[RMDB]
RNA sequence: GGGAACGACUCGAGUAGAGUCGAAAAAGCAUGCCGGCUUACGAGCCGGCAUGCAAGUAGAUAAUGAUGACUAACUGAAUUGAUGACUUUGGGCAUGGUUUAGUAAUCAGUUUCAUGAUUUCUAUAAUCUAUAUCAGUAUUUCGAUACUGAUAUAGAAAAAGAAACAACAACAACAAC
Reactivity to DMS in 0.01 (KOAc 150mM, MgCl2 10mM, bicine 150mM(pH8.5), 24C), signal-to-noise 3, nucleotides 027 to 126: a100g000c000a000u010g030c020c000g040g070c050u000u000a110c200g020a080g120c030c000g030g040c020a010u000g010c020a000a050g000u010a020g000a030u010a080a020u000g000a030u000g010a030c120u010a140a050c000u000g010a010a020u000u000g000a030u010g010a030c000u020u020u020g010g010g000c010a010u000g000g010u000u000u000a000g000u000a090a070u010c100a010g000u000u000u000c020a020u000g000a230u010u000u000c000u000a020u030a040a130
Reactivity to 2A3 in 0.01 (KOAc 150mM, MgCl2 10mM, bicine 150mM(pH8.5), 24C), signal-to-noise 6, nucleotides 027 to 126: a000g000c000a010u010g000c000c010g040g000c020u100u060a100c250g030a000g000c000c010g030g000c010a000u000g000c000a000a000g010u010a000g010a050u050a060a030u030g080a010u060g050a010c030u020a070a010c030u010g030a020a050u100u050g120a030u080g020a090c040u110u140u230g120g160g010c000a020u020g020g010u020u030u030a040g000u070a060a130u080c070a030g010u010u060u030c020a030u020g100a100u030u090u020c010u010a050u060a190a080